The record gives the reactivity of an RNA of 177 nucleotides to 2A3. 2A3 adducts were read by reverse transcription with SuperScript II with manganese.
[RMDB]
RNA sequence: GGGAACGACUCGAGUAGAGUCGAAAAGAGUUGCCGCAGGGGAACUGCCAGCGGCCUGCCAGUUCUUAACCUCAUCUGAGUUAACACCUGACGCCUCAUCCACAAUAAGGCACACCGCAUCGCCGACGCCCUGGCUACUAUUCGUAGUAGCCAGGGCAAAAGAAACAACAACAACAAC
Reactivity to 2A3 in 0.01 (KOAc 150mM, MgCl2 10mM, bicine 150mM(pH8.5), 24C), signal-to-noise 2, nucleotides 027 to 126: g060a000g020u100u050g120c090c070g110c020a020g090g030g000g050a070a100c070u080g080c020c020a030g000c000g030g040c000c000u030g010c000c000a010g000u090u040c030u070u130a020a010c000c040u060c000a150u050c080u060g040a050g140u030u100a020a010c040a060c070c030u050g030a060c090g000c000c020u050c020a030u080c060c000a110c000a120a160u090a090a080g040g010c000a010c020a010c020c010g020c020a060u050c010g050c040c030g040a010c060
Conditions: 150 mM KOAc, 10 mM MgCl2 and 150 mM bicine (pH 8.5), 24 C. The data come from the RNA Mapping Database (RMDB), library OK1LIB. The 2A3 profile rests on 858 reads.